RNA sequence: GGGAACGACUCGAGUAGAGUCGAAAAGAUAUGGAAUGCCAGGGAGCUGAUUCGGAAACGAAAUAGCGAAGAACUGGUCAUUCCUAAGUCAAACACGAACAGUUACGUUCGCGUAACUGUUCGUGAACACGAUACAGUCCUUCGGGACUGUAUCGUGAAAAGAAACAACAACAACAAC
Reactivity to 2A3 in 0.01 (KOAc 150mM, MgCl2 10mM, bicine 150mM(pH8.5), 24C), signal-to-noise 1, nucleotides 027 to 126: g000a000u030a050u190g000g000a030a000u020g010c010c000a020g050g090g040a050g040c010u050g030a190u020u000c000g000g040a020a070a070c010g000a000a050a030u090a080g020c080g190a300a010g010a020a000c020u010g010g080u070c020a010u000u000c000c000u020a090a000g070u030c040a010a100a070c020a000c010g000a000a010c000a010g000u000u000a000c040g020u050u160c300g000c000g150u020a000a000c020u000g010u020u000c000g000u000g030a000a000
Reactivity to DMS in 0.01 (KOAc 150mM, MgCl2 10mM, bicine 150mM(pH8.5), 24C), signal-to-noise 1, nucleotides 027 to 126: g000a010u000a300u000g000g000a030a020u000g000c000c000a000g000g000g000a130g060c000u000g020a100u000u000c010g000g000a140a080a170c000g000a000a010a060u000a020g040c020g020a050a130g000a110a230c000u000g000g000u000c030a000u020u000c000c010u000a030a020g000u010c030a130a070a250c010a010c030g010a020a010c010a010g010u010u000a010c020g030u010u020c220g050c000g020u000a000a000c000u000g010u010u000c000g010u000g020a040a070

Chemical mapping of a 177-nucleotide RNA with 2A3 and DMS. For DMS the reverse transcriptase was MarathonRT.